Chemical mapping of a 207-nucleotide RNA with 2A3. It was measured as part of the RMDB library OK3TST. Conditions: 150 mM KOAc, 10 mM MgCl2 and 150 mM bicine (pH 8.5), 24 C.
RNA sequence: GGGAACGACUCGAGUAGAGUCGAAAACACACGGUCAAAAGUGCUGGACGCAAUCAGGCCGUAUCUAGCGCAGCCAACCCACGGCAAAACGUUUCAUAUGGGCAGCGCACGUUAUGACUUACACGUCGCACGAAACGAUGGAUACGAAAUCCGCGGCCUAAGAGUCCAGGUUCGCCUGGACUCUUAGAAAAGAAACAACAACAACAAC
Reactivity to 2A3 in 0.01 (KOAc 150mM, MgCl2 10mM, bicine 150mM(pH8.5), 24C), signal-to-noise 1, nucleotides 027 to 156: c090a010c030a030c030g060g000u060c040a040a080a120a260g060u050g010c030u040g060g040a040c010g020c040a000a150u210c050a090g050g090c050c010g000u000a010u030c030u040a020g060c050g000c020a030g000c010c010a000a050c020c010c020a000c020g050g000c020a020a060a030a060c020g010u000u080u090c050a050u100a100u190g130g030g000c030a060g020c020g010c010a010c000g020u020u050a160u230g000a130c070u140u190a050c070a000c110g000u000c030g000c010a010c100g050a050a050a000c010g030a060u070g010g000a020u060a110c090g060a050a100a090u070c020c010g020c020g000g070c000